Conditions: 150 mM KOAc, 10 mM MgCl2 and 150 mM bicine (pH 8.5), 24 C. Chemical mapping of a 207-nucleotide RNA with DMS and 2A3. For 2A3 the reverse transcriptase was SuperScript II with manganese.

RNA sequence: GGGAACGACUCGAGUAGAGUCGAAAAGGGGUCUCGCUAAUACGCUGAUUGUCAGUCGUGUGGAGCUGAAGCCUCCACGGCUCCAUUAUCGACUUGGAUUUAUCAGCGGAUAACGAGACGGAGGCACCCAAAACAGUGACAGUUCGCUGUCACUGAACAAGUCCCAAUAGUUCGCUAUUGGGACUUGAAAAGAAACAACAACAACAAC
Reactivity to DMS in 0.01 (KOAc 150mM, MgCl2 10mM, bicine 150mM(pH8.5), 24C), signal-to-noise 2, nucleotides 027 to 156: g010g000g000g000u000c000u000c000g000c020u020a050a150u000a090c000g030c010u000g010a030u000u000g040u000c010a050g020u000c020g050u000g000u000g000g000a050g030c030u000g000a060a110g000c030c000u010c020c020a300c070g010g020c010u000c000c000a040u000u000a140u000c000g000a050c020u010u010g040g020a100u000u000u000a120u000c000a010g020c020g000g000a080u000a100a030c070g000a050g020a040c030g000g000a070g010g060c010a160c010c000c010a050a060a120a210c000a020g040u000g000a020c000a030g020u010u020c260g030c030u000g020u000c000a020c000u000g010a060a170
Reactivity to 2A3 in 0.01 (KOAc 150mM, MgCl2 10mM, bicine 150mM(pH8.5), 24C), signal-to-noise 5, nucleotides 027 to 156: g090g020g000g010u020c010u000c010g000c050u070a060a050u260a240c010g010c010u000g000a010u020u060g050u050c110a040g010u010c020g000u000g000u010g030g000a010g000c000u000g020a090a020g010c010c020u000c020c010a020c010g000g000c000u010c010c010a030u210u200a170u240c010g010a000c010u050u210g100g010a030u130u130u170a030u040c010a000g000c020g000g000a000u000a000a010c010g000a000g000a000c000g000g000a000g000g000c000a070c000c010c000a030a080a000a060c010a010g000u000g000a000c000a010g000u030u080c160g120c160u010g010u000c000a000c000u000g000a040a010